[RMDB]
RNA sequence: GGGAACGACUCGAGUAGAGUCGAAAAGCAAGAAAGAAAGAAAUCUGACAGAAUGACGGAUUCGAUCGUUGUGGUCGGCGGGCCACCACGUCAUUCCUUCGCACUGUCUCCGGGCAGACCGCCAUAAAAAAGCGGAUCUACUUCGGUAGAUCCGCAACAUCUGCAGAGGGUUCGCCCUCUGCAGAUGAAAAGAAACAACAACAACAAC
Reactivity to 2A3 in 0.01 (KOAc 150mM, MgCl2 10mM, bicine 150mM(pH8.5), 24C), signal-to-noise 2, nucleotides 027 to 156: g070c010a010a030g030a160a140a000g070a090a090a020g100a020a150a080u130c110u090g030a080c020a020g140a220a150u110g010a010c010g000g000a030u090u050c080g040a090u160c030g000u000u030g020u000g010g010u050c050g010g090c090g040g030g000c000c000a000c030c000a020c000g020u030c020a020u040u030c000c000u040u060c030g020c070a090c020u000g010u000c010u040c080c010g050g010g000c000a030g040a100c040c000g010c040c000a060u220a030a090a070a010a000a000g000c000g010g000a000u000c000u000a000c010u030u080c230g030g000u010a000g000a000u000c000c000g000c000a000a000